[RMDB]
RNA sequence: GGGAACGACUCGAGUAGAGUCGAAAAUGUCACACAGUAGCGAGGGAUGCAAUUAAUUGCAUCUACACCAAGCUCAAGGCUUGGAUUUCGACUAGUGUCGAGUCCUUCCCACUCGCUACGCCCACAAAACCGUUCCUCAUUUCGAUGAGGAACGGUUAAAAGAAACAACAACAACAAC
Reactivity to DMS in 0.01 (KOAc 150mM, MgCl2 10mM, bicine 150mM(pH8.5), 24C), signal-to-noise 1, nucleotides 027 to 126: u010g010u010c180a110c190a160c160a140g040u000a000g020c000g010a020g000g000g010a020u000g010c010a010a070u000u000a080a020u010u000g050c000a000u000c010u000a070c130a100c030c000a020a010g020c000u000c130a100a070g020g000c000u000u010g070g000a210u000u000u000c000g020a050c000u010a030g010u020g010u000c000g010a060g000u010c000c070u000u000c010c000c010a060c020u000c020g000c020u010a010c070g010c020c000c020a080c080a090a050
Reactivity to 2A3 in 0.01 (KOAc 150mM, MgCl2 10mM, bicine 150mM(pH8.5), 24C), signal-to-noise 2, nucleotides 027 to 126: u060g040u090c000a020c010a040c020a190g000u000a000g000c000g000a000g000g040g000a020u010g020c010a010a010u110u120a130a290u120u050g000c000a000u030c000u040a010c010a010c010c000a010a010g000c000u060c160a160a140g180g000c000u010u000g000g070a080u050u010u000c000g000a010c010u020a030g240u050g190u300c000g000a000g010u040c010c000u000u000c010c000c000a000c000u000c010g000c000u000a020c000g040c030c000c000a110c050a040a170